[RMDB]
RNA sequence: GGGAACGACUCGAGUAGAGUCGAAAAGAAAUACUCCCAAGAAGUUCCCGGAGGGAUCCAAGAGACGGAUGACUUUCCCCCAUUGGUUGGGAAAAGUCCCGGAACCAGGAAAUGGGAAAGAGACGGUAUACAUGUCGGUUCGCCGACAUGAAAAGAAACAACAACAACAAC
Reactivity to DMS in 0.01 (KOAc 150mM, MgCl2 10mM, bicine 150mM(pH8.5), 24C), signal-to-noise 9, nucleotides 027 to 129: g020a110a120a100u040a100c110u000c020c020c020a070a060g030a130a180g020u000u000c040c010c010g020g010a030g020g020g010a080u030c050c090a090a110g040a030g000a160c040g010g000a090u050g000a040c000u000u000u000c020c020c000c070c040a240u060u020g020g000u000u000g010g000g030a010a030a010a050g020u000c000c000c000g010g010a120a100c080c070a100g000g000a060a080a070u040g000g000g000a040a030a030g000a060g000a040c080g020g030u040a060u040a130
Reactivity to 2A3 in 0.01 (KOAc 150mM, MgCl2 10mM, bicine 150mM(pH8.5), 24C), signal-to-noise 6, nucleotides 027 to 129: g060a010a150a010u120a100c040u020c000c000c000a000a000g060a020a010g020u020u020c020c030c000g010g020a040g000g040g020a020u000c030c020a100a010g060a000g010a110c040g050g010a040u110g020a050c000u010u010u010c010c010c010c020c020a090u070u220g120g010u080u090g000g000g000a020a070a020a000g040u000c000c000c000g000g000a020a030c020c000a010g020g040a020a060a070u130g030g000g020a020a040a010g050a000g010a000c060g010g030u030a030u010a070
Conditions: 150 mM KOAc, 10 mM MgCl2 and 150 mM bicine (pH 8.5), 24 C. Structure probing data (DMS and 2A3) for a 170-nucleotide construct.